Description: Chemical mapping of a 207-nucleotide RNA with 2A3 and DMS. For DMS the reverse transcriptase was MarathonRT.

RNA sequence: GGGAACGACUCGAGUAGAGUCGAAAAUGUACAUUCGUGUACAAGUUUUCCUAAGUCUUCGACGAAUAAGUCUUGUCAGCUCGUGGUCGGAAACGACCAUCGAGCUUGGAUUUAGACUUACUAUCGAAGAUAUGGAGCUGGGAGGUUUCGACCUCAAUAUAUUCCUAAUGUUCGCAUUAGGAAUAUAAAAAGAAACAACAACAACAAC
Reactivity to 2A3 in 0.01 (KOAc 150mM, MgCl2 10mM, bicine 150mM(pH8.5), 24C), signal-to-noise 3, nucleotides 027 to 156: u060g010u000a000c010a010u030u160c270g100u070g010u030a000c010a020a040g010u000u070u090u060c010c010u040a190a030g020u000c000u000u000c010g020a030c010g020a300a290u010a000a000g000u000c010u000u020g010u000c000a010g010c000u000c000g010u000g010g000u000c000g000g020a080a070a030c010g010a000c000c000a020u080c060g000a000g000c010u000u020g020g000a000u140u080u250a010g000a010c000u000u000a010c020u010a000u010c000g000a000a010g000a000u010a040u020g030g010a040g000c100u090g030g170g000a040g000g020u050u170u140c160g080a040c000c020u020c000a010a000
Reactivity to DMS in 0.01 (KOAc 150mM, MgCl2 10mM, bicine 150mM(pH8.5), 24C), signal-to-noise 3, nucleotides 027 to 156: u000g010u000a020c000a060u000u000c300g060u010g040u010a010c000a040a120g010u000u000u010u000c010c010u020a100a290g020u000c010u000u000c010g010a020c030g000a070a050u000a010a030g010u010c000u010u010g020u000c010a050g010c000u000c000g030u000g010g010u000c010g020g000a160a160a250c010g020a020c020c000a010u000c010g020a020g020c000u000u010g020g020a040u000u010u000a030g020a030c000u000u000a010c040u000a100u000c010g010a030a020g030a010u000a110u000g010g000a180g000c030u000g000g000g000a030g010g010u000u000u000c200g010a060c010c000u000c010a010a150
It was measured as part of the RMDB library RNAMAK. Values cover nucleotides 27 to 156. The reactions ran in a buffer of 150 mM KOAc, 10 mM MgCl2 and 150 mM bicine (pH 8.5), at 24 C.